[RMDB]
RNA sequence: GGGAACGACUCGAGUAGAGUCGAAAACUCUCACCUAAAGCCAAGAAUCAUUGUUUCUUGUAGCGGUGGUUUAAACAGAGUUAUAAACAGCAAGUGAAUCUCGUCGCCUUUGUGGGGCUGUGGCCAUUCAAUACUUGAACUUCGGUUCAAGUAUUGAAAAAGAAACAACAACAACAAC
Reactivity to DMS in 0.01 (KOAc 150mM, MgCl2 10mM, bicine 150mM(pH8.5), 24C), signal-to-noise 2, nucleotides 027 to 126: c060u000c010u000c100a040c020c020u010a110a090a170g020c060c010a020a030g000a020a050u000c230a170u010u000g000u000u000u000c020u000u000g010u010a170g020c070g000g020u000g000g000u020u000u010a070a070a110c150a040g000a050g000u010u000a090u000a050a070a060c090a070g000c050a090a040g010u000g020a120a060u010c050u000c070g000u010c060g000c030c020u000u000u000g030u010g000g000g010g010c060u000g000u000g000g020c040c070a160u000
Reactivity to 2A3 in 0.01 (KOAc 150mM, MgCl2 10mM, bicine 150mM(pH8.5), 24C), signal-to-noise 3, nucleotides 027 to 126: c010u040c000u010c010a010c030c000u120a150a090a000g030c020c000a030a000g040a070a050u090c060a200u120u290g070u070u080u040c000u000u040g050u050a040g000c030g020g050u030g030g010u070u100u110a050a040a010c050a010g050a000g060u000u050a090u100a110a140a010c030a000g080c040a090a080g040u040g130a090a080u040c020u000c040g140u070c030g000c010c010u070u150u120g060u120g060g020g010g010c000u040g040u040g080g010c020c020a000u030